[RMDB]
RNA sequence: GGGAACGACUCGAGUAGAGUCGAAAACUGUAAUCUGAAGAGUCCCAAGGAUCAUUGGCGUUUGCCCCAGAAUGGGACCCCGAUAUGGCCAAGCGAACGCAGAAGGUGGUGUCUUCCGGUCCAUCAACGACUCACGAGCAUUCGUGCUCGUGAGUCGAAAAGAAACAACAACAACAAC
Reactivity to 2A3 in 0.01 (KOAc 150mM, MgCl2 10mM, bicine 150mM(pH8.5), 24C), signal-to-noise 1, nucleotides 027 to 126: c050u030g060u300a000a300u040c050u030g190a140a030g000a020g000u010c000c000c070a000a070g000g090a020u130c070a150u050u220g080g000c000g080u160u060u140g020c000c000c000c020a030g040a170a060u130g060g030g140a160c000c000c000c000g060a010u010a010u140g070g000c100c050a030a030g000c030g000a000a000c020g060c000a000g090a050a050g050g040u110g000g000u000g020u100c090u000u090c040c050g020g050u010c040c000a060u100c050a150a080
This 177-nucleotide RNA was probed chemically with 2A3. Reactivities are given for positions 27 through 126. Source: RMDB library OK1LIB, as collected in RNAgym. The RNA was probed in 150 mM KOAc, 10 mM MgCl2 and 150 mM bicine (pH 8.5) at 24 C.